The record gives the reactivity of an RNA of 177 nucleotides to DMS and 2A3. Source: RMDB library OK2TRN, as collected in RNAgym. For 2A3 the reverse transcriptase was SuperScript II with manganese. Conditions: 150 mM KOAc, 10 mM MgCl2 and 150 mM bicine (pH 8.5), 24 C. For DMS the reverse transcriptase was MarathonRT. Values cover nucleotides 27 to 126.
RNA sequence: GGGAACGACUCGAGUAGAGUCGAAAAGUGUGACAUGCAAUCAGCUCACGGCGAUUCACACGUGGUCCUGGGGCCUGAACGGCUUGGUCACCACCGGCUUCUGGUCCGACCAGCACAGCGGGGCCAGCAAGAUGUUGAGUUUCGACUCAACAUCUUGAAAAGAAACAACAACAACAAC
Reactivity to DMS in 0.01 (KOAc 150mM, MgCl2 10mM, bicine 150mM(pH8.5), 24C), signal-to-noise 7, nucleotides 027 to 126: g020u000g010u010g000a030c250a080u000g000c070a100a090u010c080a090g010c040u000c090a100c120g010g000c070g000a100u000u000c020a030c060a070c150g020u000g020g020u000c020c040u000g000g000g000g000c100c010u010g010a050a100c190g000g010c020u000u000g040g010u000c030a060c080c080a100c030c050g000g000c090u000u000c050u000g000g000u000c070c060g020a060c050c030a070g000c130a080c150a080g020c080g010g010g000g010c010c020a090g010
Reactivity to 2A3 in 0.01 (KOAc 150mM, MgCl2 10mM, bicine 150mM(pH8.5), 24C), signal-to-noise 4, nucleotides 027 to 126: g080u080g010u010g020a030c050a070u160g040c030a040a150u080c030a080g030c030u060c040a180c080g100g000c080g060a060u130u130c030a000c010a010c090g040u050g010g000u030c020c020u020g030g000g010g030c000c050u050g030a080a030c050g030g010c000u030u150g070g020u040c020a010c080c000a020c020c000g050g010c040u110u010c040u090g000g020u010c030c030g020a110c020c020a040g010c070a060c020a070g050c040g020g010g010g010c000c000a010g030